[RMDB]
RNA sequence: GGGAACGACUCGAGUAGAGUCGAAAAUGCGCGAUGAAGCCGAAAGAGUUCCCUGCAAUAAUGAUCGAGGGGAAGGUGGGCAGUUGGGUUUCAUCUCUACCAUUGAAAUUCUCAACAAUCAUCUUCCCAGACAAAACUAGUUCGCUAGUUUUGUCUGAAAAGAAACAACAACAACAAC
Reactivity to DMS in 0.01 (KOAc 150mM, MgCl2 10mM, bicine 150mM(pH8.5), 24C), signal-to-noise 9, nucleotides 027 to 126: u030g020c220g030c000g010a020u000g010a300a290g000c000c010g010a040a040a060g010a300g000u000u000c010c000c000u000g010c080a280a090u020a070a050u030g000a120u030c090g010a130g000g020g000g000a000a010g010g020u000g010g010g020c220a140g010u000u010g000g000g000u000u000u000c010a010u010c140u030c100u030a070c210c120a090u010u010g000a010a000a040u010u010c020u010c000a010a020c030a090a190u030c010a020u000c000u000u000c000c010
Reactivity to 2A3 in 0.01 (KOAc 150mM, MgCl2 10mM, bicine 150mM(pH8.5), 24C), signal-to-noise 8, nucleotides 027 to 126: u190g010c090g010c030g020a040u080g050a040a020g020c030c010g080a130a090a020g120a020g010u000u010c000c010c000u020g020c020a070a120u160a080a110u160g110a100u190c130g050a070g010g040g000g010a000a000g010g010u020g000g030g010c110a120g030u010u020g010g000g000u000u000u020c010a080u010c050u000c050u120a180c050c060a080u010u050g010a030a000a020u210u050c070u010c010a010a010c010a010a030u060c010a000u010c000u000u000c000c000